[RMDB]
Source information
This 177-nucleotide RNA was probed chemically with DMS and 2A3. DMS (dimethyl sulfate) methylates the pairing face of unpaired adenines and cytosines. For DMS the reverse transcriptase was MarathonRT. Reactivities are rounded to 0.1 and cut off at 0 and 3.
RNA sequence: GGGAACGACUCGAGUAGAGUCGAAAAAUAAUGAGUAAGGAACCUUAAAGUUAAUCGUUCCCUGUCUCUCCGCAGAACCUACUGGACAAAACAGGACAGUAAGUGGACAAAAACCUACAAAUCAGCGGAUAACAUAGAAGUUCGCUUCUAUGUUAUCAAAAGAAACAACAACAACAAC
Reactivity to DMS in 0.01 (KOAc 150mM, MgCl2 10mM, bicine 150mM(pH8.5), 24C), signal-to-noise 7, nucleotides 027 to 126: a070u010a050a040u010g010a070g010u020a080a070g000g000a090a090c130c030u010u000a050a080a190g000u010u010a070a100u020c050g010u000u000c000c000c000u000g020u010c010u000c040u010c030c040g040c040a070g000a070a030c050c030u000a040c020u000g000g010a110c040a070a060a110a120c300a110g000g010a110c030a020g000u000a030a030g010u000g000g010a060c070a040a080a040a060a070c040c040u000a070c160a060a050a060u010c050a080g030c090g000
Reactivity to 2A3 in 0.01 (KOAc 150mM, MgCl2 10mM, bicine 150mM(pH8.5), 24C), signal-to-noise 9, nucleotides 027 to 126: a000u180a010a070u070g040a010g070u050a050a070g050g040a060a040c020c020u060u090a170a110a040g060u100u150a100a070u090c030g010u010u000c010c000c000u010g070u010c010u000c000u000c020c010g010c020a030g020a070a030c000c010u010a010c010u010g010g010a020c020a020a140a060a060c070a080g030g020a000c000a000g010u030a100a010g020u050g030g020a010c070a020a130a020a020a030c030c020u090a070c090a040a120a050u100c040a040g050c020g070